[RMDB]
RNA sequence: GGGAACGACUCGAGUAGAGUCGAAAACAACGAGCGGCUGGCCUGGGUGCUGGGUGCGGCGCUGCUGCUGAUCGCCAUCGGUUUCACGGCUCUGGCACGCAAUUCCGGACGCAUGCUGCUCGGCACCUCGCCAGGAGCACUUCGGUGCUCCUGGCGAAAAAGAAACAACAACAACAAC
Reactivity to 2A3 in 0.01 (KOAc 150mM, MgCl2 10mM, bicine 150mM(pH8.5), 24C), signal-to-noise 2, nucleotides 027 to 126: c070a000a070c050g000a010g000c000g020g080c030u040g060g030c010c020u110g030g000g010u080g070c100u030g020g080g010u080g040c060g000g000c010g030c050u010g000c000u010g000c040u040g000a050u050c030g100c140c000a110u190c040g080g060u000u060u060c020a020c070g000g010c000u020c000u150g140g010c020a040c030g220c050a000a200u110u020c000c020g020g030a030c000g100c110a060u210g000c010u000g020c000u090c000g020g000c010a060c050c000